Chemical mapping of a 177-nucleotide RNA with DMS and 2A3.
For DMS, 40,379 sequencing reads were counted.
Source: RMDB library OK2TRN, as collected in RNAgym.
Conditions: 150 mM KOAc, 10 mM MgCl2 and 150 mM bicine (pH 8.5), 24 C.
For 2A3 the reverse transcriptase was SuperScript II with manganese.
[RMDB]
RNA sequence: GGGAACGACUCGAGUAGAGUCGAAAAUGCACCUGCCACCACGGUCAAGCUGGUAUCCGGGCAUGGGCGCCGGGCAUGGCCACGCCCGCGCGUUGGUGCCCCAACGUCGCCUACGGUCGGUAGACAGCAUGUAACAAUUUUUCGAAAUUGUUACAUGAAAAGAAACAACAACAACAAC
Reactivity to DMS in 0.01 (KOAc 150mM, MgCl2 10mM, bicine 150mM(pH8.5), 24C), signal-to-noise 9, nucleotides 027 to 126: u010g010c080a130c070c010u000g010c020c020a060c030c020a120c140g010g010u000c100a110a120g010c040u000g010g010u010a080u010c160c190g000g010g010c010a030u000g000g010g010c010g010c030c010g010g000g000c020a090u010g020g010c070c100a090c120g010c000c010c010g010c190g020c000g020u000u000g010g040u000g000c020c010c000c070a050a030c090g000u000c130g000c020c020u000a080c080g010g010u010c070g020g010u000a060g010a080c080a090g010
Reactivity to 2A3 in 0.01 (KOAc 150mM, MgCl2 10mM, bicine 150mM(pH8.5), 24C), signal-to-noise 9, nucleotides 027 to 126: u100g020c030a050c040c010u010g010c010c010a020c010c010a030c040g020g030u070c080a060a050g040c050u060g050g050u150a120u100c070c040g000g000g000c010a020u040g100g010g000c010g000c010c010g000g000g000c040a090u130g150g020c060c020a040c070g010c010c000c000g020c030g000c000g010u010u030g150g010u020g000c000c000c000c000a060a030c030g080u080c030g010c000c010u060a070c120g060g010u060c090g020g000u020a030g030a030c030a020g060